[RMDB]
Structure probing data (DMS and 2A3) for a 177-nucleotide construct. The DMS profile rests on 1,770 reads. DMS adducts were read by reverse transcription with MarathonRT. 2A3 adducts were read by reverse transcription with SuperScript II with manganese. Values are in units of 0.01, from 0 to 300, in steps of 10.
RNA sequence: GGGAACGACUCGAGUAGAGUCGAAAAGCGUAAGCAAAAAUGUGAUCUUGCUUGUAAAUACAAUUUUGAGAGGUUAAUAAUUUACAAGUAGUGCUAUUUUUGUCCCUCUCUGCAAUAGACAGCCAAACAUACCCGGUAGCUUCGGCUACCGGGUAUGAAAAGAAACAACAACAACAAC
Reactivity to DMS in 0.01 (KOAc 150mM, MgCl2 10mM, bicine 150mM(pH8.5), 24C), signal-to-noise 1, nucleotides 027 to 126: g050c060g000u040a040a100g000c000a000a000a010a020a070u010g010u010g000a060u040c050u010u000g000c010u000u000g000u000a020a000a030u020a070c120a140a070u000u000u020u010g000a100g010a100g000g010u020u040a090a010u000a050a010u020u000u000a000c010a010a050g000u000a000g010u000g000c010u010a020u000u000u000u000u000g000u000c030c000c000u010c010u000c020u000g000c120a020a160u060a080g020a160c220a080g000c030c040a070a040a180
Reactivity to 2A3 in 0.01 (KOAc 150mM, MgCl2 10mM, bicine 150mM(pH8.5), 24C), signal-to-noise 2, nucleotides 027 to 126: g050c020g160u120a090a020g000c050a030a030a000a000a020u250g090u050g180a300u090c070u050u050g000c000u000u010g010u000a000a040a000u130a040c070a110a110u020u040u050u080g050a070g000a020g010g080u110u130a060a060u190a070a110u080u020u010a010c000a000a000g000u030a040g070u080g140c010u050a020u060u030u000u050u010g110u090c020c020c000u000c000u000c020u030g020c000a030a020u020a060g090a060c090a050g040c060c000a060a070a070